[RMDB]
RNA sequence: GGGAACGACUCGAGUAGAGUCGAAAAACACCGCCCUUUCACGGCGGUAACAGGGGUUCGACUCCCCUACGGGAUACCACUUCCCUUGAGAAGUUAAUGGGUCGUUAGCUCAGUGGUAGAGCAGUUACUGGUCAUCCAUAUUCGUAUGGAUGACCAGAAAAGAAACAACAACAACAAC
Reactivity to DMS in 0.01 (KOAc 150mM, MgCl2 10mM, bicine 150mM(pH8.5), 24C), signal-to-noise 3, nucleotides 027 to 126: a090c140a080c020c000g030c000c000c220u020u000u000c210a170c300g000g020c000g020g010u020a020a040c150a050g040g000g020g000u010u000c050g000a300c110u010c000c040c030c010u010a010c110g020g000g000a110u010a030c010c050a020c020u000u000c010c000c020u000u000g000a150g010a080a060g000u000u010a110a110u000g000g010g000u000c010g020u000u000a070g000c020u000c010a030g010u000g000g010u000a120g000a070g010c030a130g000u000u000a160
Reactivity to 2A3 in 0.01 (KOAc 150mM, MgCl2 10mM, bicine 150mM(pH8.5), 24C), signal-to-noise 1, nucleotides 027 to 126: a030c070a010c010c020g010c020c000c050u120u280u240c160a060c080g000g020c030g000g000u000a000a000c020a000g000g010g010g040u010u000c010g020a010c030u000c040c000c000c000u000a060c090g060g000g000a020u070a160c020c030a030c030u010u020c000c040c000u030u120g110a170g020a160a000g030u130u290a100a110u260g080g010g000u040c030g060u060u080a020g000c010u000c090a100g030u000g110g030u070a090g010a020g090c040a060g030u050u100a080